[RMDB]
RNA sequence: GGGAACGACUCGAGUAGAGUCGAAAACCUAACGAACCACCUAGUUCCCUCUUUAUGAGGGCAGGUGAUAAGAGAGAAGUUACCCCAGGGAUAACUGAGUUGUCCUCGGUAAGAGUACACAUCGACCUCAGCAGAUGUGUUUCGACACAUCUGCUGAAAAAGAAACAACAACAACAAC
Reactivity to 2A3 in 0.01 (KOAc 150mM, MgCl2 10mM, bicine 150mM(pH8.5), 24C), signal-to-noise 2, nucleotides 027 to 126: c010c000u020a130a030c030g040a020a000c070c010a000c000c000u060a030g010u270u180c020c000c050u080c020u110u300u060a170u300g000a000g000g000g000c000a000g000g010u000g000a000u050a050a030g210a000g030a010g070a150a060g030u030u060a120c000c000c010c020a030g010g000g090a060u010a060a030c050u150g020a050g200u000u030g020u070c010c010u000c020g010g020u030a030a010g010a080g000u050a000c110a000c000a070u090c030g070a070c000c000
Reactivity to DMS in 0.01 (KOAc 150mM, MgCl2 10mM, bicine 150mM(pH8.5), 24C), signal-to-noise 2, nucleotides 027 to 126: c090c010u010a040a210c110g010a200a100c160c010a000c000c020u000a090g010u080u060c010c000c030u000c000u000u030u000a030u050g010a020g000g040g030c090a010g000g020u000g010a060u000a020a080g050a140g000a090g010a160a060g070u000u000a010c000c000c020c020a110g000g000g000a010u010a010a060c010u030g000a110g000u000u000g000u010c000c000u000c020g000g030u010a050a040g000a030g020u000a010c230a060c060a100u030c100g000a080c220c110